This 207-nucleotide RNA was probed chemically with 2A3.

[RMDB]
RNA sequence: GGGAACGACUCGAGUAGAGUCGAAAACGUCAUCCAACACAUGUGCACUUAUGCUCAUUCACAUACACCUCGCAGGCUCUCUGUGUCCUGGGACCUACACUUCACAUAGUACUUGGAAAUAUUUUCUCUUGAGGAAAUGGAUAUUAGAGUUGCAAUAGCCGUCGGGAGCAUUCGUGCUCCCGACGGCAAAAGAAACAACAACAACAAC
Reactivity to 2A3 in 0.01 (KOAc 150mM, MgCl2 10mM, bicine 150mM(pH8.5), 24C), signal-to-noise 1, nucleotides 027 to 156: c000g020u000c000a070u000c050c160a110a070c040a010c010a110u100g010u000g000c010a000c010u070u050a050u010g000c020u050c060a050u100u030c110a100c030a110u130a060c030a070c040c090u140c090g020c110a030g020g060c050u000c010u020c010u060g060u010g040u210c010c040u090g000g020g060a000c010c010u100a070c040a030c000u220u120c170a100c050a140u130a020g000u010a030c010u020u070g000g050a050a050a020u210a130u090u120u070u070c080u030c000u130u180g050a000g050g040a030a000a030u000g060g000a030u060a070u110u230a030g030a000g070u120u140g020c000a010a010u000a010
The RNA was probed in 150 mM KOAc, 10 mM MgCl2 and 150 mM bicine (pH 8.5) at 24 C. It was measured as part of the RMDB library OK3TST. The 2A3 profile rests on 478 reads.